The data come from the RNA Mapping Database (RMDB), library M2RFPK. Chemical mapping of a 207-nucleotide RNA with 2A3 and DMS.
RNA sequence: GGGAACGACUCGAGUAGAGUCGAAAACAUAGCGUUUCACAAUGUGCGCCAUUAACAUUGUUUAUGCAAGCACGUUUCGCAAUGUACGGCGCAGAAACAUUGCUAACACAAAUACGCUUCACGAUGUAAAACAUCGGUGCGUUCGCGCACCGAUGAACGUUACAUAUCAGUUCGCUGAUAUGUAACGAAAAGAAACAACAACAACAAC
Reactivity to 2A3 in 0.01 (KOAc 150mM, MgCl2 10mM, bicine 150mM(pH8.5), 24C), signal-to-noise 9, nucleotides 027 to 156: c060a070u170a010g000c010g010u010u090u120c100a040c010a020a020u020g010u020g020c000g000c010c020a070u140u180a060a020c010a010u010u030g080u060u140u110a120u140g070c090a040a120g120c060a050c200g020u040u070u120c040g010c000a000a010u010g000u010a020c060g000g000c000g030c020a010g040a010a070a000c000a010u000u030g020c040u120a180a010c060a000c020a140a140a040u150a020c010g020c000u090u110c090a080c120g110a070u120g060u280a040a080a070a040c000a000u000c000g000g000u000g000c000g020u030u040c160g000c000g000c040a000c000c010g000a000u000g000a010a000
Reactivity to DMS in 0.01 (KOAc 150mM, MgCl2 10mM, bicine 150mM(pH8.5), 24C), signal-to-noise 4, nucleotides 027 to 156: c050a150u010a070g020c010g000u000u010u000c090a070c030a050a110u000g020u000g040c020g030c040c030a170u000u000a060a050c040a040u000u000g020u000u000u010a060u000g020c040a090a150g030c090a140c070g030u000u030u000c130g000c060a030a020u000g030u000a050c090g000g030c030g030c020a080g000a160a100a080c000a010u010u000g010c020u000a100a070c080a150c090a060a080a100u000a060c040g020c020u000u010c050a060c050g020a120u010g010u010a070a060a080a200c030a010u000c000g000g020u000g000c000g030u000u000c250g050c020g050c000a010c020c010g030a000u000g000a020a050

About this RNA: For 2A3 the reverse transcriptase was SuperScript II with manganese. For DMS the reverse transcriptase was MarathonRT. The RNA was probed in 150 mM KOAc, 10 mM MgCl2 and 150 mM bicine (pH 8.5) at 24 C. The 2A3 profile rests on 14,210 reads.